[RMDB]
Chemical mapping of a 177-nucleotide RNA with DMS and 2A3. It was measured as part of the RMDB library VIROID. The RNA was probed in 150 mM KOAc, 10 mM MgCl2 and 150 mM bicine (pH 8.5) at 24 C.
RNA sequence: GGGAACGACUCGAGUAGAGUCGAAAACCGAUCCGAAAGGCCCGACGCCCAAGUUUGGAGAGCACUCCGGCCGAAGGGUUGAGAACACCAGAGGGAGGAACACACUCGGAGAUGAGCAGAGAAAUCACUUUUAGUAACAGUUCGCUGUUACUAAAAGAAAAGAAACAACAACAACAAC
Reactivity to DMS in 0.01 (KOAc 150mM, MgCl2 10mM, bicine 150mM(pH8.5), 24C), signal-to-noise 3, nucleotides 027 to 126: c040c020g010a090u010c070c020g000a080a100a160g000g020c030c010c060g010a140c210g020c020c000c040a110a110g010u000u010u010g030g010a100g000a180g010c180a080c080u000c020c100g000g000c030c040g000a100a160g000g010g030u020u000g010a100g010a100a080c090a060c050c040a060g000a120g010g000g010a050g000g010a060a040c090a040c070a090c100u000c080g000g000a100g000a090u000g000a040g000c070a050g000a040g010a070a050a070u010c150a170
Reactivity to 2A3 in 0.01 (KOAc 150mM, MgCl2 10mM, bicine 150mM(pH8.5), 24C), signal-to-noise 2, nucleotides 027 to 126: c010c010g000a110u020c030c020g140a110a080a020g020g020c000c020c030g020a020c070g010c030c010c020a100a010g030u060u160u200g040g020a070g000a020g030c030a030c100u000c010c020g000g010c020c010g020a070a030g070g010g000u020u120g030a040g030a080a020c050a020c020c030a010g000a020g020g030g020a050g010g050a050a030c060a000c000a010c070u010c000g030g010a050g040a070u130g020a020g020c090a050g020a010g040a120a050a030u110c030a060